About this RNA:
The record gives the reactivity of an RNA of 177 nucleotides to DMS and 2A3. The RNA was probed in 150 mM KOAc, 10 mM MgCl2 and 150 mM bicine (pH 8.5) at 24 C. Values cover nucleotides 27 to 126. The 2A3 profile rests on 5,609 reads. The data come from the RNA Mapping Database (RMDB), library OK2TRN. For DMS, 4,174 sequencing reads were counted.
[RMDB]
RNA sequence: GGGAACGACUCGAGUAGAGUCGAAAACGAGAUUGGACAACUUAGAUCGUCCAGGACAGACAGUUGAGCUGUAACUUGUCUGUUUGGAGCAUUGCAAGGAGCGGUCACACUGUCUACUUCAAGCCACCUUUGCCUCUUAUUUCGAUAAGAGGCAAAGAAAAGAAACAACAACAACAAC
Reactivity to DMS in 0.01 (KOAc 150mM, MgCl2 10mM, bicine 150mM(pH8.5), 24C), signal-to-noise 5, nucleotides 027 to 126: c100g000a090g010a140u010u000g010g010a010c010a070a050c100u000u010a120g010a120u000c090g000u000c000c010a100g000g000a060c140a020g010a020c010a010g010u000u000g020a270g020c080u000g000u010a020a260c000u000u000g020u000c180u000g000u000u000u000g010g020a110g010c070a070u010u000g020c030a030a050g000g000a300g000c020g000g010u000c020a080c220a060c040u000g000u000c010u010a060c090u000u010c080a080a130g000c060c080a080c140
Reactivity to 2A3 in 0.01 (KOAc 150mM, MgCl2 10mM, bicine 150mM(pH8.5), 24C), signal-to-noise 4, nucleotides 027 to 126: c050g020a010g030a090u080u080g010g000a000c010a100a010c160u180u280a080g040a250u130c060g020u010c010c010a000g020g030a020c010a030g000a000c000a010g010u010u020g060a040g060c020u020g020u060a020a030c000u020u070g030u000c020u030g070u070u040u130g070g030a070g020c050a080u040u220g030c010a040a030g010g020a030g040c000g000g030u060c010a030c010a000c080u020g000u020c010u030a070c020u070u070c040a050a040g030c000c020a070c030